About this RNA:
Chemical mapping of a 207-nucleotide RNA with 2A3 and DMS. The reactions ran in a buffer of 150 mM KOAc, 10 mM MgCl2 and 150 mM bicine (pH 8.5), at 24 C.
RNA sequence: GGGAACGACUCGAGUAGAGUCGAAAAUGCAGUUUAUAUUAAAGGCUAGACUGAGCUGCUCUAUCAUUGAAUCAGGGAGUCUGUCCGUAAUACAGUGUGGACCGAAAGUGAAACAGCUUAUAGAAAAGUAUCGGGAGCUUCAAAAACUUAAAGAAGACAUAACUAUGUCUUUCGAGACAUAGUUAUGAAAAGAAACAACAACAACAAC
Reactivity to 2A3 in 0.01 (KOAc 150mM, MgCl2 10mM, bicine 150mM(pH8.5), 24C), signal-to-noise 3, nucleotides 027 to 156: u080g000c000a000g010u050u130u060a170u050a080u120u280a170a090a010g050g000c020u020a000g030a050c050u060g020a000g050c020u030g030c000u060c040u100a080u060c020a110u070u130g090a140a050u080c000a040g020g020g020a030g030u010c020u040g080u050c060c000g000u020a070a040u090a110c010a040g080u020g030u060g120g040a000c000c010g080a090a030a010g070u080g040a050a060a050c010a030g020c020u080u110a080u010a140g150a040a180a030a010g020u020a040u120c010g000g020g010a020g010c000u040u010c040a080a090a020a070a080c050u080u150a080a030a110g050a030a020g000a020
Reactivity to DMS in 0.01 (KOAc 150mM, MgCl2 10mM, bicine 150mM(pH8.5), 24C), signal-to-noise 2, nucleotides 027 to 156: u010g000c010a040g030u000u010u000a130u000a210u080u010a080a070a070g010g010c000u000a090g050a240c040u000g000a050g000c000u010g000c040u000c040u000a140u010c040a120u050u000g000a090a140u020c040a090g020g020g020a100g020u020c020u000g010u000c010c020g010u010a150a080u000a060c000a040g030u000g020u000g010g000a110c030c010g000a050a060a130g020u000g000a110a070a030c040a080g010c010u000u010a170u000a110g010a080a020a090a100g020u010a050u060c030g020g000g000a040g040c030u000u010c090a040a070a070a050a030c030u000u000a050a050a130g000a030a110g020a130